[RMDB]
RNA sequence: GGGAACGACUCGAGUAGAGUCGAAAAGAUAUGGAAAAUGGUGGUCGAGGAGCAUCGAUCUAUCGUAACAUCAGAUCGGAAACGAUCUGUGGAUAGGGAGCUCGCAGACCACCAUUUUCCUAAGUCAGAUAAUUAGCACGUUCGCGUGCUAAUUAUCAAAAGAAACAACAACAACAAC
Reactivity to DMS in 0.01 (KOAc 150mM, MgCl2 10mM, bicine 150mM(pH8.5), 24C), signal-to-noise 3, nucleotides 027 to 126: g000a070u000a300u010g000g010a010a010a000a020u000g000g040u000g000g020u000c000g000a300g030g000a010g000c010a290u010c200g000a090u010c000u000a010u000c010g000u000a140a260c170a050u020c030a000g000a020u000c000g000g010a170a100a250c000g000a000u000c010u000g020u000g000g000a010u000a010g020g010g010a060g030c000u000c000g000c100a300g000a000c010c000a010c010c000a000u000u000u000u000c000c000u020a000a070g010u000c060a140

An RNA of 177 nucleotides, treated with DMS and read out base by base. The RNA was probed in 150 mM KOAc, 10 mM MgCl2 and 150 mM bicine (pH 8.5) at 24 C. Reactivities are given for positions 27 through 126.